[RMDB]
RNA sequence: GGGAACGACUCGAGUAGAGUCGAAAAGAGAUCCACCGUAGAGUGUAAGGGCAAAAGUUGGCCUGACUGUAUUUCGAUCAGCAAGAAAUUCAGAGGCGAAAGCCGGGCCUAGCGAACCUCAGAGUCCAAUCGAAUAGAUGUUCGCAUCUAUUCGAUUAAAAGAAACAACAACAACAAC
Reactivity to DMS in 0.01 (KOAc 150mM, MgCl2 10mM, bicine 150mM(pH8.5), 24C), signal-to-noise 9, nucleotides 027 to 126: g000a080g010a090u010c030c010a070c050c030g000u020a060g010a090g020u010g010u020a070a090g000g010g010c050a060a080a060a120g010u020u000g010g010c010c000u000g020a130c010u010g000u000a020u000u010u010c010g000a130u040c200a130g010c220a110a140g010a010a020a030u000u000c010a020g000a240g010g010c000g000a070a070a140g000c010c010g000g000g010c030c010u000a070g000c030g000a080a090c050c010u010c060a080g010a110g010u010c040c060
Reactivity to 2A3 in 0.01 (KOAc 150mM, MgCl2 10mM, bicine 150mM(pH8.5), 24C), signal-to-noise 8, nucleotides 027 to 126: g060a000g010a050u040c010c010a010c030c020g120u140a050g040a090g080u080g030u080a060a110g030g010g010c040a040a050a030a070g070u080u060g040g000c010c000u030g060a060c010u010g010u040a040u000u030u000c050g050a130u120c030a030g140c060a100a100g020a030a020a000u080u070c010a010g020a040g040g010c020g040a080a020a000g010c010c000g010g000g000c000c000u030a030g020c020g040a030a030c000c010u020c040a030g020a020g070u010c030c000
Source information
Chemical mapping of a 177-nucleotide RNA with DMS and 2A3. For 2A3 the reverse transcriptase was SuperScript II with manganese. It was measured as part of the RMDB libraries RFM100 and RFMREP. The reactions ran in a buffer of 150 mM KOAc, 10 mM MgCl2 and 150 mM bicine (pH 8.5), at 24 C. DMS adducts were read by reverse transcription with MarathonRT.